The data come from the RNA Mapping Database (RMDB), library OK1LIB. Chemical mapping of a 177-nucleotide RNA with 2A3.

RNA sequence: GGGAACGACUCGAGUAGAGUCGAAAAUAUACCAAAGAUGUUACGCUUACUUCUCUUCAUCUUUGUACAAUGUUCACCGUGACUGGAAGAAGGUUACCGGUUACGGUAAGAGAUUAGCCAUCAAAAAGGCGGAUGAUAGUUUCGACUAUCAUCCGCCAAAAGAAACAACAACAACAAC
Reactivity to 2A3 in 0.01 (KOAc 150mM, MgCl2 10mM, bicine 150mM(pH8.5), 24C), signal-to-noise 1, nucleotides 027 to 126: u190a030u010a080c000c000a000a160a000g000a050u020g000u170u090a150c230g000c000u130u020a060c000u220u070c000u000c000u010u000c010a000u060c020u070u260u240g040u000a030c170a130a100u170g080u060u170c010a000c080c000g000u000g000a000c000u000g070g020a020a000g060a200a020g300g140u080u160a010c000c000g000g000u000u000a000c000g000g000u000a000a000g010a000g000a020u000u120a140g030c020c000a090u170c000a000a080a000a090a000

Conditions: 150 mM KOAc, 10 mM MgCl2 and 150 mM bicine (pH 8.5), 24 C.